RNA sequence: GGGAACGACUCGAGUAGAGUCGAAAAACUUGAGAAUUCUGUGUGAGGGUACUGUAGCAUCGGGUUACUGUACACCAAUCCAGACGAUUCUCAGGUGGUUUGACGCCGGUGAACAGCUAUGGCCUCUGGUACUAUUGAUAUUCGUAUCAAUAGUACCAAAAGAAACAACAACAACAAC
Reactivity to 2A3 in 0.01 (KOAc 150mM, MgCl2 10mM, bicine 150mM(pH8.5), 24C), signal-to-noise 9, nucleotides 027 to 126: a000c000u000u010g000a000g010a010a020u260u000c010u010g240u030g010u010g150a030g010g010g000u000a000c010u030g000u000a010g010c020a070u280c230g290g150g000u010u000a000c000u020g000u020a010c160a250c040c000a000a010u000c000c000a000g010a020c050g080a020u010u000c000u000c000a000g000g010u020g010g060u060u060u170g060a040c040g000c020c010g000g030u080g040a120a060c040a080g020c010u070a100u220g020g000c000c010u030c030u030
Reactivity to DMS in 0.01 (KOAc 150mM, MgCl2 10mM, bicine 150mM(pH8.5), 24C), signal-to-noise 9, nucleotides 027 to 126: a020c010u000u000g000a010g000a020a010u010u010c010u000g000u030g000u000g000a300g000g000g020u000a000c000u000g000u000a010g010c010a300u030c190g000g010g010u000u000a000c010u000g000u000a000c000a110c000c000a010a220u000c000c000a010g000a080c300g000a070u000u000c000u000c010a010g000g000u000g000g000u010u000u000g000a070c200g010c010c010g010g000u000g000a060a080c140a110g000c030u010a060u020g010g000c010c050u000c080u010